Chemical mapping of a 177-nucleotide RNA with 2A3 and DMS.
Values cover nucleotides 27 to 126.
For 2A3, 4,162 sequencing reads were counted.
The RNA was probed in 150 mM KOAc, 10 mM MgCl2 and 150 mM bicine (pH 8.5) at 24 C.

RNA sequence: GGGAACGACUCGAGUAGAGUCGAAAAGGGGACGACGUCAAGUCAUCAUGGCCCUUACGCCUAGGGCGACACACGUGCUACAAUGGCAUAUACAAUGAGACGCAAUACCGCGAGGUGGAGCAAAUCUCUUUACGAAUAUCUUCGGAUAUUCGUAAAGAAAAGAAACAACAACAACAAC
Reactivity to 2A3 in 0.01 (KOAc 150mM, MgCl2 10mM, bicine 150mM(pH8.5), 24C), signal-to-noise 3, nucleotides 027 to 126: g020g010g000g020a000c080g000a010c020g040u120c110a060a070g030u010c010a050u060c020a020u160g120g000c000c000c000u010u060a090c090g050c010c010u030a030g010g020g010c000g080a010c010a000c000a000c100g020u020g000c010u110a080c080a180a160u170g010g000c040a020u050a010u020a100c070a050a110u140g010a040g010a060c060g010c010a000a040u030a070c010c010g010c030g040a040g000g000u010g030g020a020g000c000a010a030a030u030c020u020
Reactivity to DMS in 0.01 (KOAc 150mM, MgCl2 10mM, bicine 150mM(pH8.5), 24C), signal-to-noise 3, nucleotides 027 to 126: g010g000g000g010a100c080g020a060c010g030u000c190a150a220g000u000c040a070u020c030a090u000g030g000c020c020c040u000u000a080c240g030c100c020u000a030g000g010g000c040g010a090c110a080c220a030c120g000u020g000c000u000a090c130a130a110u000g000g000c020a000u000a050u010a100c230a070a030u000g000a030g000a080c200g000c040a030a190u050a050c020c020g000c170g010a120g010g000u000g020g010a300g010c010a060a090a060u000c040u000